Description:
Structure probing data (2A3 and DMS) for a 207-nucleotide construct. The RNA was probed in 150 mM KOAc, 10 mM MgCl2 and 150 mM bicine (pH 8.5) at 24 C. For 2A3 the reverse transcriptase was SuperScript II with manganese. The 2A3 profile rests on 1,551 reads.
[RMDB]
RNA sequence: GGGAACGACUCGAGUAGAGUCGAAAACACACUUGGUUGCAAGGGGCUGGAGGAUACAUGAAGAGGUCAGCUACUGCGUAUUGAGUCAGUGAGAAUUCAGUAGUUACAAAUGCAGGCGGGGAAUGGAUGUGUGUGUUGGUGACUCACAGCCACAGCACGUCACUGGUAUAUUCGUAUACCAGUGACGAAAAGAAACAACAACAACAAC
Reactivity to 2A3 in 0.01 (KOAc 150mM, MgCl2 10mM, bicine 150mM(pH8.5), 24C), signal-to-noise 3, nucleotides 027 to 156: c160a020c020a030c040u070u110g100g010u120u170g030c030a050a050g000g010g040g000c000u010g020g020a030g030g000a020u040a150c070a070u140g050a030a050g080a030g000g010u040c030a000g000c060u010a020c000u020g000c060g070u090a120u040u140g050a030g040u070c050a000g050u050g150a080g100a060a080u090u030c040a030g020u000a000g000u070u120a110c080a040a030a030u170g060c020a040g050g010c000g000g000g040g050a080a040u050g000g070a070u060g010u010g020u000g010u010g020u120u030g030g010u000g030a020c010u000c000a050c000a010g010c000c030a040c030a050g100c040a020
Reactivity to DMS in 0.01 (KOAc 150mM, MgCl2 10mM, bicine 150mM(pH8.5), 24C), signal-to-noise 1, nucleotides 027 to 156: c060a050c050a120c150u000u030g040g050u000u000g010c010a180a100g000g030g030g040c020u000g000g000a090g050g000a090u000a070c090a200u020g040a090a100g010a070g040g030u000c040a040g030c020u010a020c010u010g000c130g000u020a110u010u000g000a120g010u020c070a100g000u010g000a120g000a040a080u000u010c020a060g020u020a040g000u000u010a150c110a010a060a120u000g090c020a040g000g000c010g040g070g000g010a030a060u020g000g000a070u000g010u010g020u000g020u000g000u000u020g000g020u000g000a020c010u000c110a060c050a280g000c020c000a090c010a170g000c100a150
High 2A3 reactivity points to a flexible backbone, as in loops and unpaired stretches. Source: RMDB library OK3TST, as collected in RNAgym. DMS adducts were read by reverse transcription with MarathonRT.